[RMDB]
RNA sequence: GGGAACGACUCGAGUAGAGUCGAAAAUUUAGAUACUGGUACAGCUAUAGGAACUACACAAUUAGAAAAACGAGUAUCUUAUAGAGAUAGGUUUACUGUUCCUGAAGUAUUGAUGCCACAACAACUUAUAUACCAUGUUACUAAAGAGCGUAUACAACAGUCGCGAAAUAUUCGUAUUUCGCGACUGAAAAGAAACAACAACAACAAC
Reactivity to 2A3 in 0.01 (KOAc 150mM, MgCl2 10mM, bicine 150mM(pH8.5), 24C), signal-to-noise 1, nucleotides 027 to 156: u010u010u010a030g000a010u010a000c030u000g060g000u040a020c030a300g010c000u000a020u100a060g000g000a000a010c030u160a040c050a000c000a080a210u300u250a070g230a230a180a060a100a020c070g000a000g090u000a240u180c000u000u000a030u000a060g010a000g030a040u130a010g160g010u000u000u130a040c010u030g000u000u070c030c030u040g030a100a000g100u100a070u000u040g070a030u040g000c010c000a030c000a010a010c010a010a000c040u260u060a060u030a000u000a090c030c000a000u100g010u050u070a000c010u090a030a130a100g010a040g060c040g040u060a000u010a130c050a090a000